[RMDB]
RNA sequence: GGGAACGACUCGAGUAGAGUCGAAAACAGCGUGAUGGCCUGGGCGACAAGCUCGGCCAGCCGGCGGUGACGCUCGCGGAUCUUGGUCUCCGGCACAUCGUGGCCGCCCGCGGCGACGCGAUGCCUGCAGACCUACAACUUUCGAGUUGUAGGUCUGAAAAGAAACAACAACAACAAC
Reactivity to DMS in 0.01 (KOAc 150mM, MgCl2 10mM, bicine 150mM(pH8.5), 24C), signal-to-noise 4, nucleotides 027 to 126: c080a170g000c030g020u010g010a190u010g010g000c000c000u040g040g000g010c000g020a180c300a070a160g000c010u000c000g010g010c000c010a020g000c040c070g000g010c060g020g000u000g000a100c020g010c120u010c080g010c030g000g000a050u000c060u020u010g010g000u010c020u020c080c020g000g010c060a110c160a100u050c020g000u000g000g040c020c000g000c040c020c150g000c070g020g000c030g000a030c020g000c020g010a090u040g000c100c020u000g010
Reactivity to 2A3 in 0.01 (KOAc 150mM, MgCl2 10mM, bicine 150mM(pH8.5), 24C), signal-to-noise 9, nucleotides 027 to 126: c040a020g030c020g080u090g080a140u140g030g010c060c120u150g130g000g010c050g050a230c130a230a020g000c000u000c000g000g000c000c000a000g000c000c000g030g020c010g000g030u050g070a030c010g010c040u110c040g030c050g010g010a060u060c080u140u270g060g030u060c050u030c060c000g080g010c070a050c010a130u140c070g020u070g030g000c020c000g010c010c020c020g030c060g020g010c020g020a010c000g000c010g040a050u140g060c000c010u030g000

Overview:
Chemical mapping of a 177-nucleotide RNA with DMS and 2A3. Conditions: 150 mM KOAc, 10 mM MgCl2 and 150 mM bicine (pH 8.5), 24 C. It was measured as part of the RMDB library OK1LIB.